[RMDB]
RNA sequence: GGGAACGACUCGAGUAGAGUCGAAAAGACGCCUGUGUGGCGAAGCGAGAAUGAGAAAGGGCCGCACAUUAAACAGUCCAUCUAGCGGCAAGAUGGAUUGCUCGCAAAAAGAUCCAUAUCACGGAGACCUCCUAUCAUACUUCGGUAUGAUAGGAGGAAAAGAAACAACAACAACAAC
Reactivity to 2A3 in 0.01 (KOAc 150mM, MgCl2 10mM, bicine 150mM(pH8.5), 24C), signal-to-noise 5, nucleotides 027 to 126: g110a000c060g110c020c020u050g040u040g030u060g060g000c030g030a060a000g020c020g010a020g030a120a160u240g010a060g160a090a100a050g050g070g000c010c000g020c020a020c000a010u040u100a050a060a020c010a000g010u000c000c000a000u000c000u020a040g090c010g050g010c050a010a000g000a000u010g000g000a000u000u030g020c000u010c010g000c000a170a000a000a020a000g070a040u020c010c010a060u080a050u220c080a040c090g020g000a030g030a040
Reactivity to DMS in 0.01 (KOAc 150mM, MgCl2 10mM, bicine 150mM(pH8.5), 24C), signal-to-noise 2, nucleotides 027 to 126: g010a170c180g050c010c020u020g030u010g000u040g010g030c040g000a100a110g000c050g010a020g020a090a090u000g010a110g010a100a060a170g010g010g020c010c030g070c030a060c000a070u000u000a030a070a170c060a030g020u000c000c000a000u020c020u020a100g020c010g020g000c060a030a010g020a020u000g000g000a000u000u020g000c000u020c100g000c040a110a080a080a110a040g000a180u000c000c000a130u000a110u060c160a020c100g000g020a040g000a250

This 177-nucleotide RNA was probed chemically with 2A3 and DMS. For DMS the reverse transcriptase was MarathonRT. The 2A3 profile rests on 5,961 reads. 2A3 adducts were read by reverse transcription with SuperScript II with manganese. The RNA was probed in 150 mM KOAc, 10 mM MgCl2 and 150 mM bicine (pH 8.5) at 24 C.